[RMDB]
RNA sequence: GGGAACGACUCGAGUAGAGUCGAAAAGAUAUGGAAGGUUUGUCAGGCUCCUGUGAAUGGUUUCUCGGAAACGAGAAACCUCUAUUCAUUAGGAGCCUUGGAUUUAACCUUCCUAAGUCAAAACCCUUUGCUUAUGCUUCGGCAUAAGCAAAGGGAACGUAUAUAGGAGCUUCGGCUCCUAUAUACGAAAAGAAACAACAACAACAAC
Reactivity to 2A3 in 0.01 (KOAc 150mM, MgCl2 10mM, bicine 150mM(pH8.5), 24C), signal-to-noise 1, nucleotides 027 to 156: g020a000u050a010u090g000g000a000a000g000g000u020u030u060g010u010c000a000g000g010c000u000c020c010u000g000u010g000a000a040u020g000g000u000u010u020c000u000c010g010g070a180a070a060c020g000a060g010a030a000a000c010c030u020c000u020a010u040u000c000a030u110u300a170g000g000a000g080c010c040u000u120g000g000a000u010u230u040a000a010c000c000u000u000c000c000u000a000a010g010u010c000a030a030a050a160c000c020c000u030u000u000g000c010u000u010a000u000g000c000u020u060c250g080g000c000a000u020a000a000g020c020a000a010a000g010g010g000a000a000